[RMDB]
This 177-nucleotide RNA was probed chemically with DMS. The data come from the RNA Mapping Database (RMDB), library OK2TRN. Values cover nucleotides 27 to 126.
RNA sequence: GGGAACGACUCGAGUAGAGUCGAAAAAGGCAGGUAGAUGACGACCAUCAGGGACAGCUUCAACGGCUCUUACCAGCCUAACUUCGAUCACUGGACCGCUGAUCGUCACGGCGAUUUAUGCCGCACACUUCAGAAACCCUUUCGAGGGUUUCUGAAGAAAAGAAACAACAACAACAAC
Reactivity to DMS in 0.01 (KOAc 150mM, MgCl2 10mM, bicine 150mM(pH8.5), 24C), signal-to-noise 1, nucleotides 027 to 126: a120g000g020c040a020g020g020u000a000g030a180u010g010a020c000g000a070c110c020a040u000c010a140g060g000g010a070c050a010g010c130u010u010c040a020a120c270g000g000c020u000c000u000u020a220c180c200a100g020c000c020u020a090a110c180u000u020c090g000a000u000c170a140c060u000g000g020a010c030c020g020c120u000g000a050u000c010g040u000c020a080c040g000g010c080g000a110u000u030u000a080u020g010c050c000g000c150a030c200a200